RNA sequence: GGGAACGACUCGAGUAGAGUCGAAAAUGCUGAUGGGCAUCUCUAGGCUUGGGGCUGGAAAGCUGGGCCAAGGGACAUGGACUAGGCAGGAGCUUAUGGCGGUCAGCCAGAUGCCAGUGCAAGGUCCCCCUCAGCGGAUCUUCGGAUCCGCUGAGGGAAAAGAAACAACAACAACAAC
Reactivity to 2A3 in 0.01 (KOAc 150mM, MgCl2 10mM, bicine 150mM(pH8.5), 24C), signal-to-noise 1, nucleotides 027 to 126: u060g000c030u080g000a170u150g030g010g010c030a010u020c000u040c000u100a050g010g000c010u070u120g030g000g020g090c000u120g150g000a110a000a000g000c020u010g000g000g020c020c020a000a040g010g010g000a000c020a080u090g030g030a000c040u000a090g300g000c030a000g000g030a080g000c000u200u120a020u000g030g000c000g120g130u150c030a020g000c020c030a000g000a010u080g000c000c000a090g010u030g030c010a090a010g010g000u030c000c010
The record gives the reactivity of an RNA of 177 nucleotides to 2A3. Values cover nucleotides 27 to 126. As a SHAPE reagent, 2A3 marks flexible, mostly unpaired nucleotides at the ribose 2'-OH. Reactivities are rounded to 0.1 and cut off at 0 and 3. Source: RMDB library OK1LIB, as collected in RNAgym. 2A3 adducts were read by reverse transcription with SuperScript II with manganese.